Conditions: 150 mM KOAc, 10 mM MgCl2 and 150 mM bicine (pH 8.5), 24 C. An RNA of 207 nucleotides, treated with 2A3 and read out base by base.
[RMDB]
RNA sequence: GGGAACGACUCGAGUAGAGUCGAAAAGGGGUCUCGGGAGGAACUGCACAGGCGACGAUCAUAACUGAAGCCUCCACGGUUAUGGGAGCCUGACAGUUCCAUCGAUCGAGACGGAGGCACCCAAAGAAUCCAGUCAUGUUCGCAUGACUGGAUUCAAUCAGCACUUUUUGUUCGCAAAAAGUGCUGAAAAAGAAACAACAACAACAAC
Reactivity to 2A3 in 0.01 (KOAc 150mM, MgCl2 10mM, bicine 150mM(pH8.5), 24C), signal-to-noise 2, nucleotides 027 to 156: g020g000g110g030u000c000u000c030g020g020g000a040g030g000a010a020c010u050g020c180a090c050a300g010g010c100g030a300c000g000a040u000c000a000u000a010a000c000u040g040a100a000g020c000c000u010c010c000a000c000g020g010u000u000a000u000g000g000g000a000g000c000c010u000g000a010c010a000g010u010u000c000c000a050u160c000g010a000u020c010g000a000g000a000c000g000g000a000g010g000c010a030c000c000c000a070a190a010g000a000a000u000c000c000a000g020u000c000a000u000g020u040u140c300g010c230a000u000g000a000c000u020g010g000a000u000u010c000a000a000
It was measured as part of the RMDB library RNAMAK.